[RMDB]
An RNA of 177 nucleotides, treated with DMS and 2A3 and read out base by base.
RNA sequence: GGGAACGACUCGAGUAGAGUCGAAAAGAUAUGGAUUCAGCGAAAGCCGAAGAACGGCAGAUCAUCACAGUGUUUCGGAAACGAAACAUCACAGUGAUCUGCCGGGAGGCUAGCUGAAUCCUAAGUCCACUAAAGAAUAGUUCGCUAUUCUUUAGUGAAAAGAAACAACAACAACAAC
Reactivity to DMS in 0.01 (KOAc 150mM, MgCl2 10mM, bicine 150mM(pH8.5), 24C), signal-to-noise 7, nucleotides 027 to 126: g010a070u010a300u000g000g000a030u000u000c000a010g010c000g010a160a140a150g020c000c020g030a140a180g030a180a210c010g000g010c000a000g000a020u010c020a020u000c080a170c300a220g000u000g010u000u000u000c000g020g010a120a080a150c010g010a010a010a010c000a010u000c060a130c300a240g000u000g000a010u000c000u000g010c010c000g000g010g000a070g020g010c000u000a210g010c010u000g000a000a000u000c000c000u000a000a100g000u010c040
Reactivity to 2A3 in 0.01 (KOAc 150mM, MgCl2 10mM, bicine 150mM(pH8.5), 24C), signal-to-noise 6, nucleotides 027 to 126: g030a020u070a040u130g000g000a000u000u010c010a000g020c050g230a300a270a030g020c050c020g250a300a060g020a080a010c000g010g000c010a000g020a020u090c060a010u150c020a040c020a070g030u000g020u000u020u010c010g010g010a040a040a040c010g000a010a000a000c010a000u050c020a030c040a020g030u020g030a010u000c000u020g000c000c000g000g010g000a020g000g000c000u020a010g000c000u000g000a000a000u010c000c000u000a010a000g000u000c020

Description: Values are in units of 0.01, from 0 to 300, in steps of 10. For 2A3 the reverse transcriptase was SuperScript II with manganese. The DMS profile rests on 11,316 reads. DMS adducts were read by reverse transcription with MarathonRT. The reactions ran in a buffer of 150 mM KOAc, 10 mM MgCl2 and 150 mM bicine (pH 8.5), at 24 C. Reactivities are given for positions 27 through 126.